[RMDB]
RNA sequence: GGGAACGACUCGAGUAGAGUCGAAAAGUAGGAACUGACAGCUUUGGGUAGAUUAUUUUUUCAGUUGAAAUGUGUUGCUAACAAUAUGCUUACACUUGAACGCUGUUUUUCAUAUUGAUAGGAAGACACAAAUUUCUCAGGGAAACAGCUUUGUGAACACUAGUCCAUCAUUCGUGAUGGACUAGUGAAAAGAAACAACAACAACAAC
Reactivity to DMS in 0.01 (KOAc 150mM, MgCl2 10mM, bicine 150mM(pH8.5), 24C), signal-to-noise 2, nucleotides 027 to 156: g020u000a060g000g020a110a050c030u000g020a130c060a180g000c030u010u010u000g010g020g030u010a090g000a120u000u000a050u010u000u000u000u000u000c060a100g010u010u000g000a020a050a100u010g010u010g010u000u010g010c010u000a120a140c040a050a060u000a050u010g010c030u000u010a070c040a100c040u010u000g010a080a150c150g020c010u000g000u000u000u000u020u000c020a050u000a150u000u000g010a170u010a050g020g010a040a060g010a050c080a250c190a040a080a090u000u000u010c010u010c030a120g010g030g010a050a020a040c020a020g020c040u000u000u000g000u010g000a160a150
Reactivity to 2A3 in 0.01 (KOAc 150mM, MgCl2 10mM, bicine 150mM(pH8.5), 24C), signal-to-noise 5, nucleotides 027 to 156: g100u090a040g030g040a050a040c030u040g040a050c030a040g040c030u070u050u070g020g010g030u090a060g030a100u070u090a220u130u150u040u030u070u120c080a060g000u030u040g040a070a090a060u080g010u000g020u030u040g010c030u080a060a020c040a060a060u080a040u170g030c030u060u100a020c030a010c020u050u150g120a120a010c090g020c020u000g020u010u010u010u010u010c070a070u130a080u190u090g050a050u050a020g040g010a060a040g080a030c030a020c020a180a170a030u020u070u010c050u010c040a040g030g000g040a010a020a010c000a000g000c000u040u070u050g020u000g020a040a000